[RMDB]
RNA sequence: GGGAACGACUCGAGUAGAGUCGAAAAACUUGGCUGUGAGCUCACUGAAGCAAGGACUCUCUGAUUUCAUUCUGGCUCUCCAGAAUCUGCCAUGGAGUGGGCUUUCAGACAGUGUUCACCAAGCAAAGGAGUGAAUGUUACAUCCAGGGUGUCAUGACACUCGCGUAUCAUUCGUGAUACGCGAGUGAAAAGAAACAACAACAACAAC
Reactivity to 2A3 in 0.01 (KOAc 150mM, MgCl2 10mM, bicine 150mM(pH8.5), 24C), signal-to-noise 1, nucleotides 027 to 156: a000c010u020u030g050g000c000u000g000u020g000a010g030c000u000c040a000c000u020g000a020a000g000c030a050a120g120g030a120c010u060c060u000c040u190g070a250u140u180u100c070a010u000u000c020u020g040g030c090u010c060u000c080c000a000g000a030a050u000c050u070g050c030c010a060u070g090g190a020g000u010g000g040g030c050u000u020u000c000a010g020a040c000a010g020u040g000u130u060c030a040c030c000a040a010g070c020a100a040a060g030g000a030g020u110g040a120a110u110g020u140u160a050c040a060u010c020c010a050g020g060g030u030g010u050c100a140u060g010a010
Overview
Conditions: 150 mM KOAc, 10 mM MgCl2 and 150 mM bicine (pH 8.5), 24 C. Chemical mapping of a 207-nucleotide RNA with 2A3. Source: RMDB library OK3TST, as collected in RNAgym.